The data come from the RNA Mapping Database (RMDB), library OK3TST. Chemical mapping of a 207-nucleotide RNA with 2A3 and DMS. DMS adducts were read by reverse transcription with MarathonRT. The reactions ran in a buffer of 150 mM KOAc, 10 mM MgCl2 and 150 mM bicine (pH 8.5), at 24 C. Reactivities are given for positions 27 through 156.
RNA sequence: GGGAACGACUCGAGUAGAGUCGAAAAGUAGAGCGUCUUUAAACGAUUCGUACACGUUGAACUGCAACUCAUCGCGUUUUGGCAGAACACAUUCGUUUGUAGUGUAACUUAGGUCGACGGGAAACAAAUAUUUGGUGACAAAGGAAAAAACGCACAACUCACACUAAGCUUUCGAGCUUAGUGUGAGAAAAGAAACAACAACAACAAC
Reactivity to 2A3 in 0.01 (KOAc 150mM, MgCl2 10mM, bicine 150mM(pH8.5), 24C), signal-to-noise 5, nucleotides 027 to 156: g070u060a000g000a030g040c020g030u040c040u020u170u100a110a110a040c040g050a090u120u120c090g060u110a020c050a000c060g010u010u040g070a100a030c010u030g000c030a020a020c040u030c060a100u090c130g030c040g040u030u020u040u080g070g000c030a050g040a110a010c030a010c010a090u060u110c070g110u090u080u090g080u090a090g020u010g020u110a060a080c060u060u070a050g020g010u040c010g010a020c050g020g020g040a030a070a010c050a010a080a030u130a090u060u140u110g020g010u040g020a030c050a030a060a060g050g000a070a120a000a050a020a000c070g020c020a020c020a060a090
Reactivity to DMS in 0.01 (KOAc 150mM, MgCl2 10mM, bicine 150mM(pH8.5), 24C), signal-to-noise 2, nucleotides 027 to 156: g040u000a060g010a130g040c040g000u000c000u030u000u000a060a060a090c050g000a060u000u010c150g000u000a040c070a070c040g010u000u010g010a020a120c050u000g020c010a020a110c070u000c040a110u010c100g030c060g000u000u000u000u000g080g020c080a070g000a030a130c060a030c040a090u000u000c170g000u000u000u000g000u010a010g000u000g020u010a080a040c090u040u000a060g030g020u000c030g020a140c020g010g000g000a080a060a090c030a060a070a080u000a130u030u020u020g000g020u010g010a090c100a040a040a060g020g020a000a050a040a020a000a030c090g020c030a020c080a040a120